[RMDB]
RNA sequence: GGGAACGACUCGAGUAGAGUCGAAAAUUCUCAGAAUCCAGCGAGAGGCGUGGAGAGAGGGCGGCGGUGGUGCGGACUAGAGGCUCUGCAGUGCAAACACCAUCGAUCGUCCCUUCUUCUUUACCUUCUUCUGGAUCUUCCGACGAGACGUGACCGGCAUCUAAGAUACCUUCGGGUAUCUUAGAUGAAAAGAAACAACAACAACAAC
Reactivity to 2A3 in 0.01 (KOAc 150mM, MgCl2 10mM, bicine 150mM(pH8.5), 24C), signal-to-noise 5, nucleotides 027 to 156: u050u000c010u010c010a010g060a040a030u010c000c000a020g010c050g090a000g010a010g030g020c190g050u020g020g000a000g000a000g010a010g010g000g000c010g010g000c000g010g000u010g010g000u020g000c020g010g030a040c030u110a130g050a130g300g060c100u050c070u190g060c080a070g080u080g200c040a050a080a040c020a010c010c000a010u000c010g090a240u040c010g160u200c000c000c010u100u040c010u050u000c000u010u010u030a020c000c000u020u010c000u000u000c010u000g000g010a000u000c000u080u040c040c030g050a090c040g010a040g010a070c060g050u050g030a050c050c000g010g010
Reactivity to DMS in 0.01 (KOAc 150mM, MgCl2 10mM, bicine 150mM(pH8.5), 24C), signal-to-noise 1, nucleotides 027 to 156: u010u000c020u000c020a220g000a150a080u000c010c010a060g020c100g010a140g020a060g040g030c020g050u020g010g000a040g020a120g000a060g000g020g000c020g000g010c060g000g020u010g000g010u000g040c050g000g010a180c120u020a080g030a200g000g000c030u000c060u040g010c060a100g020u000g020c050a170a120a040c020a000c010c020a010u000c030g010a090u010c000g010u000c000c000c000u020u010c000u000u010c020u000u010u000a050c030c050u000u000c010u000u000c000u000g030g000a080u000c020u000u000c030c030g010a190c000g000a160g000a090c140g010u000g030a300c050c000g000g000